[RMDB]
RNA sequence: GGGAACGACUCGAGUAGAGUCGAAAAGCCGGAUAGCAGAUAGAGCGUGUGAUUCUUUGGAAACAGCAAAGGAUGGUUUAUCUGAUCUGAAAGACAGUAUUGAUGAAAUCAUUUCUUCACUGGAAGACAGAUAAGGGAACUUCGGUUCCCUUAUCUGAAAAGAAACAACAACAACAAC
Reactivity to DMS in 0.01 (KOAc 150mM, MgCl2 10mM, bicine 150mM(pH8.5), 24C), signal-to-noise 2, nucleotides 027 to 126: g030c070c030g030g010a060u010a080g020c030a050g000a100u000a020g010a070g020c110g030u000g010u000g020a100u020u010c010u000u000u000g010g000a130a100a160c170a120g020c060a060a020a030g010g010a020u000g010g000u000u000u000a040u020c010u000g010a060u010c000u000g010a130a130a110g000a140c030a010g000u000a110u010u000g010a030u010g000a050a010a070u010c020a020u000u000u010c010u000u000c070a080c040u000g010g010a070a050g010a110
Reactivity to 2A3 in 0.01 (KOAc 150mM, MgCl2 10mM, bicine 150mM(pH8.5), 24C), signal-to-noise 1, nucleotides 027 to 126: g110c060c030g010g030a140u100a070g040c000a000g070a140u090a060g110a040g060c070g020u100g030u080g140a120u010u020c040u040u030u050g030g090a090a160a130c060a050g000c000a010a020a050g040g000a000u010g040g000u020u050u010a060u000c010u000g040a060u030c010u020g070a140a100a010g100a010c000a020g050u120a040u200u150g060a060u090g070a060a040a020u070c050a000u120u000u000c010u050u090c030a010c060u070g000g100a020a000g040a060
The record gives the reactivity of an RNA of 177 nucleotides to DMS and 2A3.
Reactivities are given for positions 27 through 126.
For DMS the reverse transcriptase was MarathonRT.
It was measured as part of the RMDB library RFMREP.
For DMS, 1,580 sequencing reads were counted.